[RMDB]
RNA sequence: GGGAACGACUCGAGUAGAGUCGAAAAGGGGUCCGAGAUAUCUUACUUGGAUUUAGAAACGAGGCAUGGCUGAAGCCUCCACGGCCAUGCUACCCACCGUUUCUUGUCAGUAAGAUUUCUCGGACGGAGGCACCCAAAACCUCGGUUCGCCGAGGAAGACUACUUUGGAGUUCGCUCCAAAGUAGUCAAAAGAAACAACAACAACAAC
Reactivity to 2A3 in 0.01 (KOAc 150mM, MgCl2 10mM, bicine 150mM(pH8.5), 24C), signal-to-noise 2, nucleotides 027 to 156: g000g000g020g000u000c020c000g010a000g000a000u030a000u020c010u010u020a050c080u270u300g110g000a040u300u280u090a000g010a000a000a010c000g000a000g000g000c010a000u000g000g000c010u020g020a020a000g020c000c000u000c000c000a010c010g010g000c000c010a000u000g010c000u010a030c050c030c010a030c000c010g000u000u000u000c010u000u020g050u020c150a180g010u010a000a000g000a010u000u030u010c000u000c010g000g000a000c000g000g000a000g000g010c000a040c000c000c000a040a100a070a110c000c010u000c000g000g020u070u090c190g030c060c000g010a000g000g000a030a010

Chemical mapping of a 207-nucleotide RNA with 2A3.